[RMDB]
RNA sequence: GGGAACGACUCGAGUAGAGUCGAAAAGCACAACACCAAGCAGAUGCUGUCCACAUCGCGAACAACGCGUGUGACCUCCAGCGAUUAUCUGAUGCCAUUCUUCCACGUCUGCGCUGUUCAGAUACCAUUGACUAUGUCAAAACACAGAUCGAUACUGCCUAUGAUGCAUGUUCGCAUGCAUCAUAGGAAAAGAAACAACAACAACAAC
Reactivity to DMS in 0.01 (KOAc 150mM, MgCl2 10mM, bicine 150mM(pH8.5), 24C), signal-to-noise 1, nucleotides 027 to 156: g200c160a110c040a070a040c020a200c030c030a050a110g050c060a130g000a130u020g030c000u000g020u000c000c040a060c010a070u020c030g050c050g040a150a150c090a060a090c020g020c100g010u000g020u000g030a060c000c010u000c220c000a060g010c070g040a190u020u010a080u000c030u040g000a060u000g000c020c040a170u020u010c110u000u000c030c050a130c070g000u010c000u020g080c050g000c040u000g080u030u000c060a000g000a060u000a040c070c010a240u040u010g030a050c040u010a060u030g000u000c010a090a010a030a060c040a020c060a070g030a040u010c030g050a100u000a090c040u020g010
Reactivity to 2A3 in 0.01 (KOAc 150mM, MgCl2 10mM, bicine 150mM(pH8.5), 24C), signal-to-noise 6, nucleotides 027 to 156: g040c020a030c030a110a080c030a060c080c030a070a040g020c020a010g080a100u090g000c010u040g040u090c050c000a030c000a080u250c070g000c020g050a100a100c130a030a080c070g000c000g000u030g000u010g020a050c000c020u110c060c000a010g000c040g040a060u090u060a030u020c000u010g020a010u020g030c030c010a050u040u010c020u210u140c060c020a070c090g010u000c020u010g030c050g000c100u060g100u060u040c010a000g000a030u040a070c030c050a110u060u070g060a100c040u100a080u250g050u090c030a030a020a070a020c080a030c030a040g070a080u140c040g050a040u140a210c060u130g020
Chemical mapping of a 207-nucleotide RNA with DMS and 2A3. Reactivities are given for positions 27 through 156. The RNA was probed in 150 mM KOAc, 10 mM MgCl2 and 150 mM bicine (pH 8.5) at 24 C. The 2A3 profile rests on 3,605 reads. Source: RMDB library OK3TST, as collected in RNAgym.